[RMDB]
RNA sequence: GGGAACGACUCGAGUAGAGUCGAAAAUUAAAGGGCGAAAAAGAUCGAUCGAUCGUUUGAACGCGCAAGUCGAAGUUUGAUACGGGCAUACUAGCUAGCUAGCUAGCAAAACAAACUUCGUAAAAAACCUAACUAGAUACUUCGGUAUCUAGUUAGGAAAAGAAACAACAACAACAAC
Reactivity to DMS in 0.01 (KOAc 150mM, MgCl2 10mM, bicine 150mM(pH8.5), 24C), signal-to-noise 4, nucleotides 027 to 126: u000u020a070a120a110g000g000g020c010g020a040a050a040a090a040g000a000u010c000g010a140u020c210g010a010u000c000g020u010u000u000g020a170a140c030g010c020g000c120a100a140g020u000c010g010a000a000g010u000u010u000g000a090u010a090c180g010g000g000c150a120u000a060c010u000a000g000c000u000a170g020c180u000a050g010c020u000a010g010c040a020a050a110a100c010a010a000a000c010u000u000c000g010u000a000a030a080a090a030a050
Reactivity to 2A3 in 0.01 (KOAc 150mM, MgCl2 10mM, bicine 150mM(pH8.5), 24C), signal-to-noise 2, nucleotides 027 to 126: u090u080a100a080a040g100g030g000c030g050a020a050a000a010a000g010a020u030c030g090a130u130c140g020a020u010c040g090u010u060u090g050a130a010c000g030c020g010c080a070a000g080u010c010g000a010a000g000u000u000u040g070a110u140a080c090g050g050g000c040a030u060a150c020u000a020g010c000u010a030g120c040u100a020g010c010u020a000g000c050a010a000a040a070c000a000a000a000c000u010u000c000g010u010a090a070a000a010a000a000

The record gives the reactivity of an RNA of 177 nucleotides to DMS and 2A3. Values cover nucleotides 27 to 126. The data come from the RNA Mapping Database (RMDB), library M2PK90. The RNA was probed in 150 mM KOAc, 10 mM MgCl2 and 150 mM bicine (pH 8.5) at 24 C. The DMS profile rests on 3,805 reads. For 2A3 the reverse transcriptase was SuperScript II with manganese. DMS adducts were read by reverse transcription with MarathonRT.